[RMDB]
RNA sequence: GGGAACGACUCGAGUAGAGUCGAAAAUAGAGAGUGAGAGUCAUUCAGGGACUGUGGCAUCUGUCAUACAUUAGAAUUUUAAAUACAACCAUAAAUUAAGAGAUAGUUGAGAGCAUACCUUCAGAGAGUUAAAGAGCAUACCUUCAGAGAAUAUGAACCCUUUCCUUAUGUUCGCAUAAGGAAAGGGAAAAGAAACAACAACAACAAC
Reactivity to DMS in 0.01 (KOAc 150mM, MgCl2 10mM, bicine 150mM(pH8.5), 24C), signal-to-noise 1, nucleotides 027 to 156: u000a090g000a000g030a060g000u000g000a100g000a110g070u040c050a160u020u000c120a100g050g030g020a080c050u000g020u020g020g010c020a030u010c070u000g010u000c020a110u020a060c100a110u000u000a090g010a120a120u000u000u000u000a040a060a190u000a070c120a030a150c030c010a050u010a030a050a110u000u000a030a140g000a090g000a060u000a060g010u000u010g000a120g060a050g020c030a090u000a030c010c020u010u000c030a070g050a140g000a070g000u010u000a040a060a090g000a050g010c020a040u010a140c060c000u000u000c020a060g000a070g020a040a110u010a060u010g010a030a100
Reactivity to 2A3 in 0.01 (KOAc 150mM, MgCl2 10mM, bicine 150mM(pH8.5), 24C), signal-to-noise 2, nucleotides 027 to 156: u090a010g060a020g000a050g030u020g010a050g010a040g050u030c040a040u160u030c070a010g020g000g060a060c070u030g000u040g050g000c000a060u030c040u070g020u000c040a010u060a140c020a050u070u150a050g050a080a040u040u070u100u150a160a090a060u220a090c060a040a100c020c040a020u150a170a110a020u130u080a040a010g010a000g000a040u010a020g070u040u140g080a090g000a000g080c010a020u030a070c000c000u000u030c020a000g030a000g000a000g080u080u120a070a020a000g020a000g000c000a000u030a070c010c010u020u020c020a000g010a010g060a050a030u300a070u300g030a030a040
The record gives the reactivity of an RNA of 207 nucleotides to DMS and 2A3. The data come from the RNA Mapping Database (RMDB), library OK3TST. For 2A3 the reverse transcriptase was SuperScript II with manganese.